[RMDB]
RNA sequence: GGGAACGACUCGAGUAGAGUCGAAAAGUCGCCGCUUCUACAUCAACGCCCAGCGCGGGCGAGGGAGGCGUCCUACGGGGGUGACCCAUUCGCCGGCAUGGUAGAGGACUGCAAGAUUGCCUCGACGGGUACUCGUAUUAUUCGUAAUACGAGUACCAAAAGAAACAACAACAACAAC
Reactivity to DMS in 0.01 (KOAc 150mM, MgCl2 10mM, bicine 150mM(pH8.5), 24C), signal-to-noise 6, nucleotides 027 to 126: g020u000c050g010c050c060g000c030u000u010c020u000a070c070a100u000c080a100a140c060g020c050c000c020a120g010c190g010c100g000g000g000c000g000a050g000g000g010a080g000g010c020g020u000c010c010u000a100c200g010g000g000g010g010u000g000a140c030c010c020a180u000u000c040g010c010c000g020g010c040a090u010g000g000u000a070g010a060g010g000a070c080u000g000c090a090a100g000a090u000u010g010c030c020u000c020g000a110c200g010
Reactivity to 2A3 in 0.01 (KOAc 150mM, MgCl2 10mM, bicine 150mM(pH8.5), 24C), signal-to-noise 4, nucleotides 027 to 126: g040u020c020g010c030c010g000c040u050u020c030u080a100c020a120u130c040a110a070c060g020c000c010c010a080g110c250g030c130g090g010g000c010g010a020g060g020g000a200g000g020c010g040u010c010c000u030a120c120g200g000g000g000g010u060g090a160c000c010c000a030u050u030c030g010c000c000g020g050c040a050u100g040g000u050a050g010a020g010g050a140c020u030g010c040a030a080g030a270u080u220g020c000c010u030c020g040a060c070g080